The record gives the reactivity of an RNA of 307 nucleotides to 2A3.
RNA sequence: GGGAACGACUCGAGUAGAGUCGAAAACCAGUUACGUACGCGUAACUGGACCUCGCGUACGCGCGAGGAGACGAAGCUACGGCUUCGUCACACGGCGCGUUCGCGCGCCGUGACCUGAUCUACGGAUCAGGAACUCAAUCGUUCGCGAUUGAGACCUAGUCUACGGACUAGGAAAAACAAAUAAAAUAAGAAACACUCAAGCACGUGAGUGCUUGAGAGACACUAUCUACGGAUAGUGUCAACGUGAAGGCUACGAUAGUGCCAGUAGUAGGACGUUCGCGUCCUACAAAAGAAACAACAACAACAAC
Reactivity to 2A3 in 0.01 (KOAc 150mM, MgCl2 10mM, bicine 150mM(pH8.5), 24C), signal-to-noise 4, nucleotides 027 to 266: c000c000a000g000u000u000a010c010g020u010a030c300g010c010g140u000a000a000c000u000g000g000a010c000c000u000c000g010c010g010u050a050c220g000c010g000c000g090a030g000g000a050g000a000c000g000a000a000g000c010u020a010c300g140g000c000u010u000c000g000u000c000a000c000a000c010g010g000c010g030c000g030u050u080c270g030c000g000c010g010c060c010g010u010g010a010c000c000u000g000a000u000c000u010a040c300g110g000a000u000c000a000g000g000a030a040c000u000c000a000a000u000c000g040u070u060c220g000c010g140a000u010u000g010a010g010a010c000c000u000a000g000u000c010u010a040c300g080g000a000c000u010a010g010g000a030a050a010a010a030c040a060a060a020u300a090a070a050a020u300a170a060g130a120a140a010c070a020c040u000c000a000a000g000c000a010c030g130u190g210a140g040u010g030c000u000u000g000a000g000a010g000a000c000a000c000u000a000u000c000u010a020c300g120g000a000u010a000g000u010g000u010c000a000a020c000g000u000g030a020a010g000g000c000u000a020c020g250a250u010a020g000u000g000c000c010a010g020u010a020

The RNA was probed in 150 mM KOAc, 10 mM MgCl2 and 150 mM bicine (pH 8.5) at 24 C.